[RMDB]
RNA sequence: GGGAACGACUCGAGUAGAGUCGAAAAAACUCAGCUAGGGAGAGUAUAACAUUCAUGUUGACGAGACCUAGACGAAACACAGAGGAAAAUUAUUAAUCACUGGAUAGUAUUAGUCAUGACUCUGUGUAAAACUCUUCUACGUUCGCGUAGAAGAGAACUAGGUUGCUUAGUUCGCUAAGCAACCUAGAAAAGAAACAACAACAACAAC
Reactivity to DMS in 0.01 (KOAc 150mM, MgCl2 10mM, bicine 150mM(pH8.5), 24C), signal-to-noise 1, nucleotides 027 to 156: a080a080c080u000c000a070g080c040u000a040g000g020g010a130g070a290g030u000a070u000a060a080c040a120u000u020c160a040u020g010u000u030g000a090c000g020a200g010a180c030c000u000a050g000a300c060g010a130a130a050c010a010c000a020g000a040g000g010a110a150a090a020u020u050a060u000u000a080a000u000c120a110c080u000g030g000a290u000a210g040u000a070u010u000a030g030u000c090a300u000g000a270c000u000c000u010g000u010g000u010a020a020a060a060c000u000c000u050u000c000u000a000c000g020u000u000c300g070c020g000u000a000g000a010a000g000a000g000a020a040
Reactivity to 2A3 in 0.01 (KOAc 150mM, MgCl2 10mM, bicine 150mM(pH8.5), 24C), signal-to-noise 2, nucleotides 027 to 156: a000a000c010u000c010a000g000c010u000a000g000g020g000a050g020a030g030u100a080u090a300a010c050a000u030u270c070a110u240g010u050u070g050a020c040g020a000g040a060c010c000u010a010g030a010c020g010a010a050a000c010a000c000a000g000a000g000g080a030a140a100a000u000u010a010u000u000a000a010u020c050a000c040u020g100g070a150u290a300g000u010a020u010u010a000g000u010c000a000u000g000a000c000u030c000u000g000u010g000u000a010a000a000a010c000u000c000u000u000c000u000a010c000g020u030u010c210g000c010g100u000a010g010a000a000g000a010g000a010a000